[RMDB]
RNA sequence: GGGAACGACUCGAGUAGAGUCGAAAAAAAGUCAGUCCACCGCUAUGCAAUACAAAACCACCGUCGGUGCUGAGAGAAACUUGACGGCUGUUAUCGCUAUUUGCAGAAAUUGAACCUGCCAGCGUUCCUUUAAAGUCCAUUUCGAUGGACUUUAAAGAAAAGAAACAACAACAACAAC
Reactivity to 2A3 in 0.01 (KOAc 150mM, MgCl2 10mM, bicine 150mM(pH8.5), 24C), signal-to-noise 3, nucleotides 027 to 126: a000a000a000g090u050c020a010g040u020c010c010a030c050c010g010c040u050a030u090g020c010a060a010u040a140c020a030a140a030a020c030c020a010c000c020g030u000c010g050g020u030g010c070u130g060a110g010a010g020a120a170a020c100u170u290g010a020c010g020g010c020u040g030u070u030a080u130c030g010c060u040a050u130u090u110g000c010a000g040a060a120a030u110u110g000a020a020c000c000u010g000c010c000a020g010c000g030u030u000c010
Reactivity to DMS in 0.01 (KOAc 150mM, MgCl2 10mM, bicine 150mM(pH8.5), 24C), signal-to-noise 5, nucleotides 027 to 126: a040a040a080g010u010c040a070g010u000c030c020a070c050c030g010c030u000a080u000g010c030a040a040u000a040c100a050a040a070a060c080c080a070c020c020g020u000c020g010g000u000g020c080u010g000a150g000a140g010a080a070a020c030u000u020g020a030c040g010g010c100u010g000u000u010a070u010c120g010c100u000a050u000u010u010g020c010a030g000a060a070a080u010u000g010a080a080c090c010u000g000c040c110a080g010c050g020u000u000c030